The record gives the reactivity of an RNA of 177 nucleotides to 2A3 and DMS. Values are in units of 0.01, from 0 to 300, in steps of 10. The RNA was probed in 150 mM KOAc, 10 mM MgCl2 and 150 mM bicine (pH 8.5) at 24 C. DMS adducts were read by reverse transcription with MarathonRT. For DMS, 1,513 sequencing reads were counted.

RNA sequence: GGGAACGACUCGAGUAGAGUCGAAAACACCAACAAAACUCCUGAUGCAUAUCUGGUAGAAAAUGGGAAACUCUACAUAGUUGAUUUUAAGGUGGCUGGGGAUAUUAGAAAAAGGGCAGCUGAAACACACCGAUAUAGGCUUCGGCCUAUAUCGGUGAAAAGAAACAACAACAACAAC
Reactivity to 2A3 in 0.01 (KOAc 150mM, MgCl2 10mM, bicine 150mM(pH8.5), 24C), signal-to-noise 2, nucleotides 027 to 126: c070a000c000c050a010a080c020a050a190a000a090c030u030c010c000u070g060a050u030g010c070a030u080a110u240c040u050g030g040u070a030g050a040a080a000a080u090g000g030g050a040a040a030c030u050c000u030a050c000a100u170a070g050u050u150g050a220u030u050u060u090a090a010g020g000u060g050g000c030u060g000g010g000g000a000u020a200u180u120a240g120a060a030a060a090a030g030g010g000c000a020g040c060u050g040a020a020a000c080a000
Reactivity to DMS in 0.01 (KOAc 150mM, MgCl2 10mM, bicine 150mM(pH8.5), 24C), signal-to-noise 2, nucleotides 027 to 126: c130a200c030c000a180a170c210a050a080a060a060c120u000c000c000u000g060a040u030g030c180a040u020a000u000c020u000g000g000u030a000g020a010a000a200a060u000g020g000g010a110a100a040c000u050c030u000a100c150a080u040a100g000u010u000g000a060u000u000u010u040a100a280g000g040u020g000g020c080u000g010g000g020g000a010u000a050u040u020a080g000a040a000a090a090a060g000g000g000c060a030g010c050u020g000a070a070a070c150a140
As a SHAPE reagent, 2A3 marks flexible, mostly unpaired nucleotides at the ribose 2'-OH.